[RMDB]
RNA sequence: GGGAACGACUCGAGUAGAGUCGAAAAAUCUUGCUUCGUCUCGCAUUAUGCCGCAGCAGGAGCAGAACCGCAAAGACCUUGAGAAUCGCCUGAUUAACUCUGGUAUCCGCCCUGGAACUUCUGCUUACAAUACGGAAAUGGCGCGCCUUACGAACGCCAGGUGAGAAGGAUUCGUCCUUCUCACCUGAAAAGAAACAACAACAACAAC
Reactivity to 2A3 in 0.01 (KOAc 150mM, MgCl2 10mM, bicine 150mM(pH8.5), 24C), signal-to-noise 4, nucleotides 027 to 156: a000u040c010u010u090g000c000u020u030c020g090u030c050u020c080g000c020a090u160u170a110u300g060c050c010g010c030a010g000c010a010g000g010a000g010c010a000g030a040a050c070c020g000c080a110a110a000g020a040c020c030u180u210g000a010g030a070a050u060c080g080c130c160u180g030a080u090u130a110a090c030u030c040u040g030g000u050a090u040c040c040g040c050c000c000u030g010g090a080a040c020u040u030c000u040g060c000u030u090a100c070a100a110u110a170c080g040g040a050a010a070u120g050g010c010g010c000g020c030c000u120u060a070c080g090a170a020c060g020c000
Reactivity to DMS in 0.01 (KOAc 150mM, MgCl2 10mM, bicine 150mM(pH8.5), 24C), signal-to-noise 1, nucleotides 027 to 156: a070u000c030u000u000g020c020u000u010c000g010u010c020u020c060g100c020a130u010u000a080u000g020c080c080g010c130a030g050c060a100g020g030a110g030c000a090g030a100a130c080c010g000c030a050a060a060g000a020c030c000u010u000g020a090g060a130a090u000c070g070c110c100u000g000a080u000u070a090a120c030u000c010u000g030g020u000a060u000c030c070g040c020c040c040u000g020g010a110a090c060u010u000c020u010g000c040u000u000a090c120a030a120u000a150c040g020g020a040a030a030u010g070g040c080g060c060g000c020c020u000u020a070c090g020a100a100c040g020c000
The data come from the RNA Mapping Database (RMDB), library OK3TST. This 207-nucleotide RNA was probed chemically with 2A3 and DMS.